[RMDB]
RNA sequence: GGGAACGACUCGAGUAGAGUCGAAAAGCCUUCGUUCGCGAAGGCAAAAACCGUAGGUUCUAUACUCCAUGCAUAAUCGAUGAAAUUCGAAAGAGUGGAGAUUAUGAACUACAUGUAAAUAGAACCUAAACGGAAAAAAGUGAUCUUCGGAUCACAAGGACAUUAUGUCCUUCGGGACAUAAUGUCCAAAAGAAACAACAACAACAAC
Reactivity to 2A3 in 0.01 (KOAc 150mM, MgCl2 10mM, bicine 150mM(pH8.5), 24C), signal-to-noise 2, nucleotides 027 to 156: g000c000c000u020u000c000g080u040u130c280g000c030g200a010a000g000g000c000a250a000a050a000a000c010c010g010u030a010g020g000u020u000c000u000a000u020a100c050u050c090c020a000u010g000c010a010u010a020a000u020c020g150a110u030g040a070a030a000u030u000c010g060a140a020a010g000a010g000u060g000g000a010g000a020u010u000a000u010g030a040a050c010u050a020c040a000u020g010u000a080a140a020u000a020g000a000a000c000c000u040a180a070a020c020g070g000a070a070a040a000a010a040g010u010g000a000u010c000u080u080c290g080g020a000u000c040a000c010a000a090
This 207-nucleotide RNA was probed chemically with 2A3. The RNA was probed in 150 mM KOAc, 10 mM MgCl2 and 150 mM bicine (pH 8.5) at 24 C. It was measured as part of the RMDB library RNAMAK.